[RMDB]
RNA sequence: GGGAACGACUCGAGUAGAGUCGAAAAGAUAUGGACAAUGGCUCGAUAAGAUACACUCGGAAACGAGUGAAUAUCUUUUGACGAGCCGCGUCCUAAGUCAAAACUAGGCAAGUUCGCUUGCCUAGAACAGUUCUACGCAGUUCGCUGCGUAGAACUGAAAAGAAACAACAACAACAAC
Reactivity to DMS in 0.01 (KOAc 150mM, MgCl2 10mM, bicine 150mM(pH8.5), 24C), signal-to-noise 2, nucleotides 027 to 126: g000a050u000a300u000g010g000a000c010a020a270u010g010g000c000u000c000g000a190u010a040a030g000a000u000a020c000a020c000u030c000g000g010a060a070a130c000g000a010g020u010g000a100a160u000a000u000c000u000u000u000u010g000a160c070g020a000g000c000c000g000c300g000u030c000c000u000a020a070g010u000c010a070a100a150a180c020u010a000g000g000c000a010a040g000u000u000c240g040c000u000u000g000c010c000u000a000g010a080a080
Reactivity to 2A3 in 0.01 (KOAc 150mM, MgCl2 10mM, bicine 150mM(pH8.5), 24C), signal-to-noise 1, nucleotides 027 to 126: g010a010u010a010u060g040g000a010c020a110a180u160g010g000c020u020c000g150a200u130a300a000g000a000u000a010c000a000c000u000c010g040g000a000a000a000c000g010a010g000u000g020a020a000u010a000u050c000u040u170u140u300g300a080c000g020a000g000c000c010g000c020g000u000c000c000u000a060a010g020u010c020a020a000a190a250c000u000a000g010g010c010a030a020g020u080u120c190g090c170u010u050g000c000c000u000a000g010a000a000

Structure probing data (DMS and 2A3) for a 177-nucleotide construct. For 2A3, 1,743 sequencing reads were counted. DMS adducts were read by reverse transcription with MarathonRT. Reactivities are given for positions 27 through 126. Conditions: 150 mM KOAc, 10 mM MgCl2 and 150 mM bicine (pH 8.5), 24 C.